[RMDB]
RNA sequence: GGGAACGACUCGAGUAGAGUCGAAAACUGGAUACCUUCGGGUAUCCAGAAAGGCCGAGUAGUGUUGGGUCGCGAAAGGCCAUAAAUAAACAUUCACUCAGAAAAGCCAUAGCUUCGGCUAUGGCAAUCUUUGAGAGUGAUUCGUCACUCUCAAAGAAAAAGAAACAACAACAACAAC
Reactivity to 2A3 in 0.01 (KOAc 150mM, MgCl2 10mM, bicine 150mM(pH8.5), 24C), signal-to-noise 2, nucleotides 027 to 126: c000u010g000g010a000u000a000c000c000u010u040c050g070g000g020u000a000u000c000c000a000g000a060a020a000g000g020c000c010g010a020g000u000a000g000u010g120u180u070g140g040g040u200c020g020c000g030a060a040a040g010g010c020c010a010u010a000a010a010u040a000a050a000c050a010u180u210c050a020c040u050c030a050g150a070a170a050a030g000c000c000a020u000a010g010c000u050u060c300g070g000c000u010a010u010g000g000c000a010a000
Reactivity to DMS in 0.01 (KOAc 150mM, MgCl2 10mM, bicine 150mM(pH8.5), 24C), signal-to-noise 3, nucleotides 027 to 126: c000u000g010g000a010u000a010c000c000u010u010c220g030g010g010u000a010u010c000c000a000g000a020a050a100g000g010c010c010g000a060g000u000a120g000u010g000u000u000g000g000g010u000c040g000c030g010a120a120a210g000g010c000c000a030u000a030a020a060u010a060a100a090c110a080u010u000c110a020c030u010c060a130g000a090a060a120a190g000c000c000a010u000a000g000c010u000u010c190g020g000c000u010a000u000g000g000c010a010a010